[RMDB]
RNA sequence: GGGAACGACUCGAGUAGAGUCGAAAAGAGGACCAGAAUACCUCGUAAAUACAUCUGGAAAAAAAUAGUCGCAAACGACGAAAACUACGCUUUAGCCGCUUAAUACGGCUAGCCUCUGCACCGAUGGGCCUUAACGUCGGGUCUGGCAACAGACAGCCUUAUCAUGUCAGUUCGCUGACAUGAUAAGAAAAGAAACAACAACAACAAC
Reactivity to 2A3 in 0.01 (KOAc 150mM, MgCl2 10mM, bicine 150mM(pH8.5), 24C), signal-to-noise 6, nucleotides 027 to 156: g010a010g000g010a030c010c020a010g020a040a100u160a140c000c000u020c020g040u070a040a090a030u150a030c040a020u000c020u020g000g000a120a010a010a000a000a010a060u180a030g010u010c020g000c110a080a120a140c050g040a010c010g030a050a020a040a020c060u120a040c060g020c020u110u090u090a010g000c010c010g050c130u140u180a060a030u180a210c010g000g000c000u000a000g000c000c010u040c030u070g000c030a030c040c020g030a040u050g010g050g070c030c050u120u140a080a020c030g020u010c010g010g040g000u000c020u010g010g000c030a070a020c000a040g050a020c010a020g010c000
Reactivity to DMS in 0.01 (KOAc 150mM, MgCl2 10mM, bicine 150mM(pH8.5), 24C), signal-to-noise 2, nucleotides 027 to 156: g020a030g000g050a270c030c020a100g020a150a110u000a060c000c030u010c180g030u010a060a110a130u000a050c040a060u000c020u010g000g020a000a000a000a130a100a100a180u000a030g000u010c000g040c070a060a100a180c020g000a030c020g010a080a050a070a090c040u000a040c070g000c060u010u010u000a060g010c000c020g020c000u000u010a120a190u000a040c000g010g040c000u010a020g000c050c020u000c010u010g000c060a140c000c010g030a040u000g020g030g000c050c080u010u000a030a090c030g020u000c010g010g020g010u000c020u000g010g000c210a080a100c020a000g000a070c050a120g010c050